[RMDB]
RNA sequence: GGGAACGACUCGAGUAGAGUCGAAAAAGAAAGAAAGCAAUGAGUACUUGAGGACUCCUGCUACUAGUGUGCCAUGGACCCUCUAUUGCAAUGACAAAAGUGAAAACAUAAAAUGUCAACCUCUGGACCAAUGUGUGGUUAGUGCCACCGCAGCACACUCGAGUACUCGAUUCGUCGAGUACUCGAGAAAAGAAACAACAACAACAAC
Reactivity to 2A3 in 0.01 (KOAc 150mM, MgCl2 10mM, bicine 150mM(pH8.5), 24C), signal-to-noise 1, nucleotides 027 to 156: a000g060a000a000a000g160a070a050a000g040c080a000a170u110g000a060g070u110a050c040u150u150g000a010g000g010a000c060u030c030c000u010g070c000u010a040c000u000a040g050u040g040u050g240c040c000a090u000g040g000a070c050c000c040u070c000u060a020u000u120g000c000a010a110u030g000a040c060a010a220a000a000g050u100g170a030a060a040a040c060a060u070a140a070a040a080u100g000u020c000a050a050c130c110u120c080u060g070g050a030c000c000a040a060u130g060u050g000u050g010g000u050u030a050g000u040g090c000c000a070c010c110g030c020a010g000c000a000c010a000